[RMDB]
RNA sequence: GGGAACGACUCGAGUAGAGUCGAAAACAGGGACGGUAUAAUCAGCCUUGAAGAACUACUGACGAGCUGCCUUGAUUUGUGCUGCCCCGAUUGUGCGUCACGUCGGUGGAGAUUCGGCAGAGCGCAACAUGGAGGGUGAACUAGAAGCAGGUACAGACCUCACCUGUAUUUUCGAAUACAGGUGAGGAAAAGAAACAACAACAACAAC
Reactivity to 2A3 in 0.01 (KOAc 150mM, MgCl2 10mM, bicine 150mM(pH8.5), 24C), signal-to-noise 4, nucleotides 027 to 156: c020a010g020g010g030a020c020g000g070u070a060u080a170a090u080c030a000g010c000c020u060u090g040a050a040g030a060a040c040u120a040c030u160g070a080c040g010a010g030c020u030g000c060c060u090u140g060a110u080u050u090g070u090g000c050u090g000c020c010c000c010g060a020u050u060g020u010g040c090g060u110c070a010c060g010u010c010g000g080u100g040g140a170g050a110u120u110c000g000g000c030a010g020a040g030c010g000c010a070a160c000a080u070g010g040a110g120g040g010u050g050a040a030c000u030a060g030a130a010g020c020a010g030g040u070a050c040a040g120a070
Reactivity to DMS in 0.01 (KOAc 150mM, MgCl2 10mM, bicine 150mM(pH8.5), 24C), signal-to-noise 1, nucleotides 027 to 156: c050a170g010g020g010a040c040g000g040u010a070u000a080a070u010c040a050g000c010c090u000u020g050a180a170g030a100a110c050u000a030c060u020g000a070c050g000a220g020c000u000g020c030c000u010u000g000a180u020u000u000g000u020g020c030u000g000c000c020c010c000g000a100u000u010g050u000g010c060g070u000c080a130c110g030u000c020g010g000u000g000g000a190g020a170u000u000c030g010g040c030a130g020a190g050c020g010c010a000a080c050a040u000g000g010a030g010g010g000u000g010a030a060c030u000a150g010a040a060g040c030a000g030g010u020a010c040a120g000a080
The record gives the reactivity of an RNA of 207 nucleotides to 2A3 and DMS. Conditions: 150 mM KOAc, 10 mM MgCl2 and 150 mM bicine (pH 8.5), 24 C. Reactivities are rounded to 0.1 and cut off at 0 and 3. 2A3 is a SHAPE reagent: it acylates the 2'-hydroxyl of flexible nucleotides of all four kinds. DMS adducts were read by reverse transcription with MarathonRT.